[RMDB]
This 177-nucleotide RNA was probed chemically with DMS.
Values cover nucleotides 27 to 126.
For DMS the reverse transcriptase was MarathonRT.
The RNA was probed in 150 mM KOAc, 10 mM MgCl2 and 150 mM bicine (pH 8.5) at 24 C.
RNA sequence: GGGAACGACUCGAGUAGAGUCGAAAAAAUAGGGAAAGGUUAUAGAAGGAUGGAGUUUCUAUAAAGCAUUUACCCUAUCUGUUAUCACCUAACGCAAGUUAUCCACCAUCCAAGCGUCGAAACUGUAGCAUCACUUACAGUUCGCUGUAAGUGAUGCAAAAGAAACAACAACAACAAC
Reactivity to DMS in 0.01 (KOAc 150mM, MgCl2 10mM, bicine 150mM(pH8.5), 24C), signal-to-noise 1, nucleotides 027 to 126: a080a000u010a010g000g000g010a060a070a120g000g000u010u000a010u000a020g000a070a060g020g000a080u010g030g020a130g030u010u010u000c030u000a020u000a030a020a050g030c050a140u000u020u000a090c000c010c000u000a020u010c110u040g000u000u000a070u000c090a140c010c000u000a020a090c090g010c120a100a070g060u000u000a030u000c070c060a100c030c020a030u000c030c020a130a150g010c070g000u010c130g030a070a120a060c050u000g030u000a250